[RMDB]
RNA sequence: GGGAACGACUCGAGUAGAGUCGAAAAAUCCUCAGGUUCGUAAGCGUGAUGAUUGGGUGUUCAUGCUCCAUGCAUGACAUGUGCCUCCUUUGAACCUUGUUACGACCUUGGCACAUUACCCAUCUGAAAAAGACGUUCGCGUUCGCGCGAACGUCAAGUCAAUCUAAAUCUUCGGAUUUAGAUUGACAAAAGAAACAACAACAACAAC
Reactivity to 2A3 in 0.01 (KOAc 150mM, MgCl2 10mM, bicine 150mM(pH8.5), 24C), signal-to-noise 6, nucleotides 027 to 156: a000u020c000c010u030c030a020g010g010u010u030c020g040u070a020a050g040c090g100u070g100a080u040g020a030u130u270g030g000g000u060g030u080u050c000a000u000g000c010u100c190c080a130u300g000c000a000u000g000a010c000a010u010g000u000g000c010c000u040c000c000u080u040u040g010a020a020c000c000u020u120g080u040u100a080c100g050a090c040c050u050u080g000g020c000a010c000a020u060u160a040c000c010c010a010u000c010u070g090a110a030a020a020a020g000a000c000g000u000u000c000g000c000g010u040u050c200g000c000g000c000g080a000a000c020g000u000c000a000a000
Reactivity to DMS in 0.01 (KOAc 150mM, MgCl2 10mM, bicine 150mM(pH8.5), 24C), signal-to-noise 2, nucleotides 027 to 156: a090u010c010c010u010c070a080g010g040u000u000c050g000u000a020a100g030c110g040u000g030a160u030g000a080u000u000g050g020g000u000g070u010u010c020a020u010g020c010u000c140c170a200u020g010c000a030u010g000a050c300a190u000g030u000g000c000c010u010c140c040u000u010u000g000a030a070c020c050u000u000g030u000u000a160c080g000a100c090c050u000u000g000g040c010a020c010a060u010u010a060c020c000c020a100u000c020u000g000a100a090a100a090a210g000a020c010g010u000u010c000g030c000g030u000u000c300g000c060g040c000g000a000a000c000g000u000c000a000a060

Conditions: 150 mM KOAc, 10 mM MgCl2 and 150 mM bicine (pH 8.5), 24 C. An RNA of 207 nucleotides, treated with 2A3 and DMS and read out base by base. 2A3 adducts were read by reverse transcription with SuperScript II with manganese. Reactivities are given for positions 27 through 156. For 2A3, 5,116 sequencing reads were counted. The data come from the RNA Mapping Database (RMDB), library M2RFOK. DMS adducts were read by reverse transcription with MarathonRT.